This 207-nucleotide RNA was probed chemically with DMS and 2A3. For DMS, 2,760 sequencing reads were counted. DMS adducts were read by reverse transcription with MarathonRT. The reactions ran in a buffer of 150 mM KOAc, 10 mM MgCl2 and 150 mM bicine (pH 8.5), at 24 C. Source: RMDB library M2RFPK, as collected in RNAgym.
RNA sequence: GGGAACGACUCGAGUAGAGUCGAAAAGUUAGGCGAGGCUCCAAUACAAACACAGGUUGCUGAUCUGACGACGUCGAGAGACGCCCAAGAUUAGGACAGGAUAUAUCGAACCAAGGUAUAUCCCCAUAAAACUCGGAACACUUCGGUGUUCCGAGAACUAAGUCAGUUUGUUCGCAAACUGACUUAGAAAAGAAACAACAACAACAAC
Reactivity to DMS in 0.01 (KOAc 150mM, MgCl2 10mM, bicine 150mM(pH8.5), 24C), signal-to-noise 2, nucleotides 027 to 156: g030u020u010a070g020g000c070g020a100g030g000c030u000c050c060a080a150u010a160c040a120a110a110c070a120c130a080g010g030u000u000g000c000u020g040a010u010c020u000g010a160c000g010a020c010g030u000c020g010a300g000a300g010a020c020g010c000c010c040a150a090g020a030u010u020a010g010g000a100c090a060g030g000a020u010a010u000a030u000c020g000a120a190c100c150a070a190g000g020u000a010u000a010u010c000c000c030c020a070u010a030a080a040a150c000u000c000g000g010a000a010c000a010c000u000u010c300g070g010u010g000u000u000c000c010g010a020g000a030a080
Reactivity to 2A3 in 0.01 (KOAc 150mM, MgCl2 10mM, bicine 150mM(pH8.5), 24C), signal-to-noise 3, nucleotides 027 to 156: g040u060u040a030g000g030c090g050a070g020g020c050u020c030c040a050a060u220a160c120a060a200a000c080a010c050a080g090g000u160u190g070c030u030g010a060u000c000u000g000a010c010g010a010c000g010u000c020g010a020g000a010g000a060c010g060c000c010c000a010a040g070a070u090u190a020g060g000a040c080a080g010g010a000u000a000u000a000u000c010g050a070a130c090c050a150a070g010g000u000a010u000a000u010c020c010c010c000a030u190a100a090a040a030c000u000c000g000g000a000a010c000a000c020u050u060c220g070g000u010g000u010u000c000c010g000a000g000a000a000